RNA sequence: GGGAACGACUCGAGUAGAGUCGAAAACGUAGCGCACCUUCAAUGGUGAAGAUGGCCAUUUUGCUCACAAUGUUUGCUAUCUCGGUGAAAUUAAUGAGAAAAUUCUUCAAGGUGAAGAAUAAUGGAACAUAAGGGAUGCUUUCGAGCAUCCCUUAUGAAAAGAAACAACAACAACAAC
Reactivity to DMS in 0.01 (KOAc 150mM, MgCl2 10mM, bicine 150mM(pH8.5), 24C), signal-to-noise 3, nucleotides 027 to 126: c060g020u000a100g010c110g000c000a000c020c010u000u000c190a110a130u010g010g030u010g000a050a040g000a090u000g010g020c020c020a070u000u000u000u000g000c020u000c040a060c090a040a080u010g030u000u000u010g010c020u000a060u010c070u000c120g010g010u010g000a040a060a050u000u000a060a120u020g010a050g000a100a060a070a060u000u000c000u000u000c000a150a130g010g000u000g000a010a010g010a010a000u000a040a110u010g000g010a090a170
Reactivity to 2A3 in 0.01 (KOAc 150mM, MgCl2 10mM, bicine 150mM(pH8.5), 24C), signal-to-noise 3, nucleotides 027 to 126: c010g060u020a010g080c040g000c080a000c010c020u130u180c100a130a300u140g030g020u050g000a010a000g070a060u080g000g020c010c000a020u040u050u110u200g060c020u010c040a050c020a040a090u090g060u050u030u070g050c020u040a040u070c030u020c120g000g080u140g020a110a020a030u150u190a000a090u110g020a010g020a060a070a030a030u000u000c010u020u010c040a150a200g300g020u170g110a010a010g030a000a030u050a050a070u070g070g020a100a040